[RMDB]
RNA sequence: GGGAACGACUCGAGUAGAGUCGAAAAAGAGUUUGCUGGAGUUCCACUCCAGACCCUGUUUGCCUGGGUACCACCAGUGGAGGCUGCAGAACAGCAAAUAUUGAAGAACAGCAAAUAUUGCUGCCUGUACAUUCGCGUAAUUCGUUACGCGAAUGUAAAAAGAAACAACAACAACAAC
Reactivity to DMS in 0.01 (KOAc 150mM, MgCl2 10mM, bicine 150mM(pH8.5), 24C), signal-to-noise 2, nucleotides 027 to 126: a050g020a110g020u000u010u000g050c070u000g000g010a030g000u000u000c180c100a140c020u010c020c050a060g000a040c050c030c030u010g000u000u010u000g010c140c050u010g000g010g000u010a080c160c040a120c080c090a030g030u000g030g020a040g010g020c050u000g010c040a060g030a070a230c020a020g000c000a010a010a060u000a030u020u010g000a120a080g020a080a150c210a070g000c040a040a050a070u010a040u010u000g000c020u000g020c080c010u010g000
Reactivity to 2A3 in 0.01 (KOAc 150mM, MgCl2 10mM, bicine 150mM(pH8.5), 24C), signal-to-noise 1, nucleotides 027 to 126: a000g100a010g030u100u050u130g000c000u030g010g040a040g010u120u080c020c060a040c040u000c000c020a040g000a050c000c000c010u060g070u090u130u170g090c080c020u100g050g000g030u130a130c050c000a000c000c040a000g040u000g010g060a000g070g080c040u000g000c060a000g010a100a040c000a000g000c000a020a050a050u220a110u090u010g090a180a090g080a200a060c040a040g040c020a000a090a030u220a100u130u090g000c000u000g000c030c030u040g020